[RMDB]
RNA sequence: GGGAACGACUCGAGUAGAGUCGAAAAGAACACGUCUCGGGACGACGCUAAACUCGCCCUGGUCGGGAUGGGUUUAACGACCCCUUGGGUUUCCUAGUUCCUAAAACUAGGUGGUGGAGUCAUAUAAAAAACUUCUACACGUUCGCGUGUAGAAGAACAAGCAUAAUUUCUUCGGAAAUUAUGCUUGAAAAGAAACAACAACAACAAC
Reactivity to 2A3 in 0.01 (KOAc 150mM, MgCl2 10mM, bicine 150mM(pH8.5), 24C), signal-to-noise 3, nucleotides 027 to 156: g050a050a030c070a000c070g050u000c010u020c040g000g020g030a080c300g020a030c020g050c110u000a010a000a010c010u020c000g040c010c000c000u080g090g100u130c090g030g000g050a110u060g030g010g000u020u040u040a040a020c010g030a020c000c010c010c010u060u080g050g000g000u000u030u000c000c000u010a010g010u030u030c010c050u130a040a020a010a010c000u010a000g000g000u010g050g020u050g010g050a060g020u070c070a040u140a010u300a210a080a020a000a010a080c000u000u000c000u000a000c000a000c000g020u050u040c180g020c000g100u000g000u000a000g010a000a000g000a000a020
Reactivity to DMS in 0.01 (KOAc 150mM, MgCl2 10mM, bicine 150mM(pH8.5), 24C), signal-to-noise 2, nucleotides 027 to 156: g000a120a060c060a120c060g010u000c010u010c070g000g000g020a050c030g030a100c000g040c070u000a060a060a070c100u000c000g020c000c010c000u010g010g010u000c190g000g000g000a070u000g020g000g000u010u000u000a010a100c040g000a150c010c010c010c020u010u000g020g010g010u000u000u000c010c010u000a000g010u000u000c030c060u000a050a040a050a060c020u000a000g000g030u000g010g010u000g000g000a230g010u000c040a120u010a210u040a000a070a040a150a050a120c010u000u000c000u000a000c000a030c000g040u000u010c300g020c060g010u000g000u000a000g010a000a010g010a100a120
The record gives the reactivity of an RNA of 207 nucleotides to 2A3 and DMS. The DMS profile rests on 3,601 reads. The 2A3 profile rests on 2,705 reads. Reactivities are rounded to 0.1 and cut off at 0 and 3. Source: RMDB library M2RFPK, as collected in RNAgym. The RNA was probed in 150 mM KOAc, 10 mM MgCl2 and 150 mM bicine (pH 8.5) at 24 C. DMS adducts were read by reverse transcription with MarathonRT. Values cover nucleotides 27 to 156.